[RMDB]
RNA sequence: GGGAACGACUCGAGUAGAGUCGAAAAUUGCCUGUUUUGGCACUAGCACAUUUUUGCUUUUUUAUAUAUACCUUGAGCAAUUAUGUGUAGUGCCAAUAUGGGACACUUAUCUCAUCUUCGGAUGAGAGAUAAGAGAAACUUUCGAGUUUCUCUUAUCAAAAGAAACAACAACAACAAC
Reactivity to DMS in 0.01 (KOAc 150mM, MgCl2 10mM, bicine 150mM(pH8.5), 24C), signal-to-noise 3, nucleotides 027 to 126: u010u000g010c010c000u010g000u000u000u000u000g000g010c000a010c000u000a060g020c000a000c000a010u000u010u000u000u010g010c000u000u000u000u030u010u000a110u030a180u010a150u010a140c230c160u010u010g000a000g010c000a010a000u000u000a000u000g030u000g020u000a010g000u000g000c010c010a000a000u000a010u000g010g000g010a070c110a050c170u000u010a180u000c000u000c000a010u000c010u000u010c180g010g000a020u010g000a010g010a030
Reactivity to 2A3 in 0.01 (KOAc 150mM, MgCl2 10mM, bicine 150mM(pH8.5), 24C), signal-to-noise 4, nucleotides 027 to 126: u130u100g030c010c000u010g010u000u010u000u010g000g000c000a000c000u030a080g180c010a000c010a020u000u010u000u000u020g010c000u150u120u040u010u200u020a180u060a020u010a040u100a190c020c030u060u100g000a000g000c000a010a010u020u000a000u020g000u000g030u010a000g000u000g000c000c010a000a000u000a000u000g000g000g030a000c030a010c060u150u170a070u060c010u000c010a010u000c000u030u040c210g120g000a000u020g000a000g010a010